[RMDB]
RNA sequence: GGGAACGACUCGAGUAGAGUCGAAAAGGAACACUAACACCCGUGUAUCCCGCUACACCAGCACGGCCCGACAUCGCCUACGCCGUGGUGCCGAUGGGACUGCCGAGCUCACAACUACUGCAGCCACGGAGGAACCUACAUUCGUGUAGGUUCCUCCAAAAGAAACAACAACAACAAC
Reactivity to 2A3 in 0.01 (KOAc 150mM, MgCl2 10mM, bicine 150mM(pH8.5), 24C), signal-to-noise 1, nucleotides 027 to 126: g070g010a110a010c040a010c070u090a190a000c050a110c080c040c000g000u010g000u000a110u060c000c030c050g000c010u060a030c030a030c050c070a000g030c040a010c020g050g000c000c000c010g120a060c010a130u120c070g000c040c000u070a050c110g090c050c040g070u020g010g090u050g000c050c000g090a080u100g000g080g030a010c020u040g000c040c000g000a010g000c020u000c020a120c000a060a060c020u180a060c000u060g000c030a020g030c030c000a030c030
Reactivity to DMS in 0.01 (KOAc 150mM, MgCl2 10mM, bicine 150mM(pH8.5), 24C), signal-to-noise 1, nucleotides 027 to 126: g010g010a100a050c080a070c050u000a110a080c170a150c050c040c080g060u020g000u010a080u000c040c000c060g000c210u000a110c070a070c030c050a150g000c060a140c090g010g010c020c080c030g000a050c040a070u000c080g000c010c050u010a130c160g010c070c050g000u010g010g010u020g000c030c000g000a040u000g000g030g010a080c070u000g010c050c050g010a050g040c010u000c140a050c140a040a080c040u000a040c020u000g000c040a020g000c010c050a100c100